[RMDB]
RNA sequence: GGGAACGACUCGAGUAGAGUCGAAAAAGAAAAGCAUGACUCAAGUUCAGAGUGGCAUUCUGUUGGAGCACUGUCGUUUUGCCAUUUUUAUGGAAGCAAAAGUACAGGGGGAGUUAGAUGCUAUUCAAGUCCACUGGUAUUUCGAUACCAGUGGACUAAAAGAAACAACAACAACAAC
Reactivity to 2A3 in 0.01 (KOAc 150mM, MgCl2 10mM, bicine 150mM(pH8.5), 24C), signal-to-noise 1, nucleotides 027 to 126: a030g020a020a030a000a010g050c000a010u070g010a030c000u000c020a000a130g060u150u100c010a010g010a060g090u080g180g060c080a060u120u030c030u030g090u040u130g090g110a120g020c070a010c060u050g010u050c100g000u020u000u050u050g000c000c000a000u070u120u000u080u290a160u140g030g100a110a030g050c000a020a110a000a000g020u060a050c050a030g090g000g000g000g030a000g000u000u000a110g020a060u020g000c020u050a050u070u030c020a040
Reactivity to DMS in 0.01 (KOAc 150mM, MgCl2 10mM, bicine 150mM(pH8.5), 24C), signal-to-noise 2, nucleotides 027 to 126: a030g030a050a060a090a070g010c010a090u000g010a070c010u000c010a170a180g020u000u010c040a040g000a040g030u000g030g030c110a090u000u000c030u000g000u000u020g000g000a100g000c070a070c020u000g000u000c080g010u000u010u000u010g030c000c020a090u000u000u010u010u000a050u000g000g020a220a130g000c050a010a010a050a230g000u010a060c030a040g020g000g060g010g000a080g010u000u000a030g000a130u010g020c020u000a090u010u000c070a070